[RMDB]
RNA sequence: GGGAACGACUCGAGUAGAGUCGAAAAGACGCCUACGUGGUCGAAGACUUCGGUUGCGGCUGCGUGGCCGAAAACAUCGAACUGGUGACGGCAUGACGAUCAACACGCCCGCCCGCGCACACUUCAAUCGCGUCUCGGCCGCGCGCGCGGCGGCCGCCACCCGUAUCAACUUCGGUUGAUACGGGUGAAAAGAAACAACAACAACAAC
Reactivity to 2A3 in 0.01 (KOAc 150mM, MgCl2 10mM, bicine 150mM(pH8.5), 24C), signal-to-noise 1, nucleotides 027 to 156: g060a000c050g050c050c060u060a030c010g000u060g000g000u030c060g030a130a050g030a040c060u070u040c210g070g000u070u050g050c020g070g000c080u120g030c020g010u020g000g000c000c000g030a030a040a000a050c070a070u100c070g050a090a150c070u100g000g000u020g040a050c060g010g000c070a040u140g000a060c040g080a120u140c080a090a130c040a000c040g030c010c010c000g040c050c010c010g000c010g000c020a030c000a010c150u260u200c110a060a150u120c020g010c010g100u010c030u030c060g070g000c030c040g020c000g060c020g010c020g000c050g040g000c090g000g000c000c000g010c010

About this RNA
The record gives the reactivity of an RNA of 207 nucleotides to 2A3. Conditions: 150 mM KOAc, 10 mM MgCl2 and 150 mM bicine (pH 8.5), 24 C. The data come from the RNA Mapping Database (RMDB), library OK3TST. For 2A3, 528 sequencing reads were counted.